Structure probing data (2A3) for a 177-nucleotide construct. High 2A3 reactivity points to a flexible backbone, as in loops and unpaired stretches. The RNA was probed in 150 mM KOAc, 10 mM MgCl2 and 150 mM bicine (pH 8.5) at 24 C.
RNA sequence: GGGAACGACUCGAGUAGAGUCGAAAAGAUAUUUAUUCUUCCGUUAUCUUGUCGUAAUCUGCUCAGCGUGGGCCGACAUGAAUUAGCUAGGGACCGGCGAAAGUCGUCAGCGGUCCUGGCUGCGGUCCCCGCACAGCUAGUUCGCUAGCUGUGCGGGAAAAGAAACAACAACAACAAC
Reactivity to 2A3 in 0.01 (KOAc 150mM, MgCl2 10mM, bicine 150mM(pH8.5), 24C), signal-to-noise 3, nucleotides 027 to 126: g010a050u060a010u070u300u060a260u050u110c060u170u050c030c030g120u050u050a040u040c010u000u070g050u050c030g030u020a090a180u020c000u010g000c000u010c010a040g020c000g050u030g000g000g000c030c000g010a030c020a160u090g090a130a080u100u020a020g010c010u030a010g020g080g000a030c010c000g040g010c020g050a110a180a100g210u220c100g090u120c070a050g120c040g020g000u010c010c000u000g000g000c000u000g000c000g000g010u010c000